[RMDB]
RNA sequence: GGGAACGACUCGAGUAGAGUCGAAAACGUUCUAAGGGCUGUGAAGCAUGACCGGAAGGACAUGUGGAGCGCUGAGAAGUGAGAAUGCCGGUAUGAGUAGCGAAAGAAGGGUGAGAAUCCCUUCCACCGGGGAGAAACAUUUCGAUGUUUCUCCCCGAAAAGAAACAACAACAACAAC
Reactivity to DMS in 0.01 (KOAc 150mM, MgCl2 10mM, bicine 150mM(pH8.5), 24C), signal-to-noise 2, nucleotides 027 to 126: c060g010u000u000c020u000a080a030g060g000g010c010u010g030u000g010a240a250g000c000a000u000g020a080c000c040g020g050a130a140g010g010a110c000a010u000g030u000g000g050a100g010c040g000c020u000g000a090g010a030a050g020u010g010a090g010a040a080u000g000c050c070g030g000u000a060u010g000a080g010u000a030g000c040g000a130a020a230g000a000a030g000g010g040u000g010a190g000a240a140u000c000c000c000u000u030c000c300a050c080
The data come from the RNA Mapping Database (RMDB), library OK2TRN. An RNA of 177 nucleotides, treated with DMS and read out base by base. The RNA was probed in 150 mM KOAc, 10 mM MgCl2 and 150 mM bicine (pH 8.5) at 24 C. The DMS profile rests on 1,070 reads.